RNA sequence: GGGAACGACUCGAGUAGAGUCGAAAACUUGUGACUUCGGUCACAAGAAAAAAUCCUAAGUCGAUGGACCUAAGACAGCUAAAGGGAGUCGGAAACGACGAAGAACUUUAGUCGAGGUCGUCGAUAUGGAAAAAACUUUGCAGUUCGCUGCAAAGAACGUUAAGACUCUCUUCGGAGAGUCUUAACGAAAAGAAACAACAACAACAAC
Reactivity to 2A3 in 0.01 (KOAc 150mM, MgCl2 10mM, bicine 150mM(pH8.5), 24C), signal-to-noise 1, nucleotides 027 to 156: c000u000u000g000u030g000a020c010u000u060c260g090g000u010c000a000c000a000a000g030a020a010a000a000a000a000u010c010c010u050a080a040g040u010c010g000a010u080g300g020a000c000c000u080a110a040g100a070c080a060g000c010u000a000a000a000g050g000g000a030g020u000c020g030g000a120a120a040c020g020a000c020g090a150a040g010a020a030c000u010u000u040a010g060u130c010g020a020g000g000u000c000g000u000c000g010a000u010a050u080g000g000a040a040a050a090a030a030c000u010u010u010g010c000a050g030u040u100c150g080c150u000g000c000a000a020a010g030a060a020